[RMDB]
RNA sequence: GGGAACGACUCGAGUAGAGUCGAAAAACUUAGUGGAUGGCCCUGAUAACCAAAAAUUGGCAGAGAAUAUGAUCGUUAAGCACCAUAAUUUUACAAGGGUAAUCAAUCAUAUUGGCAAAUGGAUGGACGAUAUACGACGUUUCGACGUCGUAUAUCGAAAAGAAACAACAACAACAAC
Reactivity to DMS in 0.01 (KOAc 150mM, MgCl2 10mM, bicine 150mM(pH8.5), 24C), signal-to-noise 3, nucleotides 027 to 126: a060c070u000u010a070g020u010g010g000a100u000g000g020c010c000c020u000g010a110u010a140a110c020c020a050a030a080a120a060u010u000g010g020c050a160g020a180g020a050a020u000a000u010g000a040u010c040g020u000u000a080a140g030c160a060c010c000a040u040a040a100u000u000u010u010a130c200a080a110g010g000g000u010a050a030u000c030a040a020u010c010a030u000a070u000u010g020g000c080a030a050a030u000g020g010a300u000g000g000a210
Reactivity to 2A3 in 0.01 (KOAc 150mM, MgCl2 10mM, bicine 150mM(pH8.5), 24C), signal-to-noise 2, nucleotides 027 to 126: a000c040u090u060a050g030u060g160g050a050u020g040g000c000c000c000u060g040a110u070a180a150c000c000a000a010a040a040a190u040u040g030g000c020a000g020a000g070a270a010u040a010u050g050a040u030c020g000u050u060a110a020g030c050a100c060c000a010u080a100a210u150u160u170u060a080c070a050a050g010g060g030u000a000a060u060c040a000a000u010c020a000u000a040u090u070g040g030c020a020a070a020u020g040g010a020u050g020g010a010